[RMDB]
Conditions: 150 mM KOAc, 10 mM MgCl2 and 150 mM bicine (pH 8.5), 24 C.
Structure probing data (2A3) for a 207-nucleotide construct.
2A3 is a SHAPE reagent: it acylates the 2'-hydroxyl of flexible nucleotides of all four kinds.
RNA sequence: GGGAACGACUCGAGUAGAGUCGAAAACACUCACAUCUAUCUGGAUGAGGACUCAGGUGAAUACCUCCGAUACGAAGAGGUCGAGGGUAUGGAAGUCCAAGGCUCCGAUGGGACUUAUCCUAAAGAGGCUUGCCCAUACAUCCCGAUUCGGAUGGUCGGUAUGGGUAGCAUUCGUGCUACCCAUACCAAAAGAAACAACAACAACAAC
Reactivity to 2A3 in 0.01 (KOAc 150mM, MgCl2 10mM, bicine 150mM(pH8.5), 24C), signal-to-noise 1, nucleotides 027 to 156: c020a020c000u010c040a100c000a020u020c020u100a000u020c010u020g040g000a010u000g090a020g110g000a000c000u010c100a080g140g000u090g170a050a060u100a080c000c010u080c020c000g010a010u120a230c010g050a090a090g080a100g150g080u000c020g010a060g040g000g030u000a000u070g010g020a040a000g020u020c060c010a000a000g020g000c020u020c020c020g040a080u270g000g010g060a090c020u110u090a090u210c020c020u020a080a000a000g070a000g050g020c020u010u010g000c040c010c000a020u050a090c010a040u040c000c040c000g030a020u090u130c020g000g050a000u020g150g050u060c100
2A3 adducts were read by reverse transcription with SuperScript II with manganese.